[RMDB]
RNA sequence: GGGAACGACUCGAGUAGAGUCGAAAACAGCGUGAAGCCGCUGACCGUCAGCAGGGCUCGGAAUAGAUUCAUGGGGCGCUUAUUAUACGGACCUCGGGCGGCGGCGACCGAUACGUUCGAGCAAAAACUCCUAUUUUACCUUCGGGUAAAAUAGGAGAAAAGAAACAACAACAACAAC
Reactivity to DMS in 0.01 (KOAc 150mM, MgCl2 10mM, bicine 150mM(pH8.5), 24C), signal-to-noise 1, nucleotides 027 to 126: c100a150g000c000g050u000g000a220a100g000c030c000g020c000u010g030a120c070c010g010u010c040a070g040c240a000g000g020g030c040u040c000g010g020a090a080u010a020g000a190u000u000c100a080u010g000g000g030g010c300g020c120u000u000a070u000u010a080u010a190c030g000g010a040c000c000u000c080g000g000g010c040g000g000c000g000g000c020g010a040c000c000g000a140u020a000c020g010u000u000c090g010a140g040c110a070a080a110a080a100